[RMDB]
RNA sequence: GGGAACGACUCGAGUAGAGUCGAAAAGUACCAAGUAAAUUUAUAGAGUUUAAAAUACUUGAUACACCUAAUAGAUGAACCGCAAACAUAACAAAGUCACAAGCCAAACUUGAAUGAAAGUCUAUACAUAUUAAAGUAGGAUAUAGCGUCCAACCCACUGUCAUAUAAUCUUCGGAUUAUAUGACAGAAAAGAAACAACAACAACAAC
Reactivity to 2A3 in 0.01 (KOAc 150mM, MgCl2 10mM, bicine 150mM(pH8.5), 24C), signal-to-noise 2, nucleotides 027 to 156: g010u010a050c010c010a010a000g000u030a040a150a170u080u210u110a230u160a170g030a040g010u070u110u200a040a050a020a010u020a060c000u010u020g010a000u010a010c010a090c000c040u060a110a070u060a110g110a080u070g050a020a010c020c000g060c060a070a070a030c050a090u150a090a020c020a040a130a000g030u050c030a020c020a070a000g050c040c020a040a080a090c070u010u090g040a050a010u090g070a130a080a020g000u010c010u020a120u080a040c010a070u200a040u130u300a200a060a010g000u040a050g030g000a040u090a020u040a110g060c030g030u000c010c030a060a050c050c000c000a020
Structure probing data (2A3) for a 207-nucleotide construct. Reactivities are given for positions 27 through 156. For 2A3 the reverse transcriptase was SuperScript II with manganese.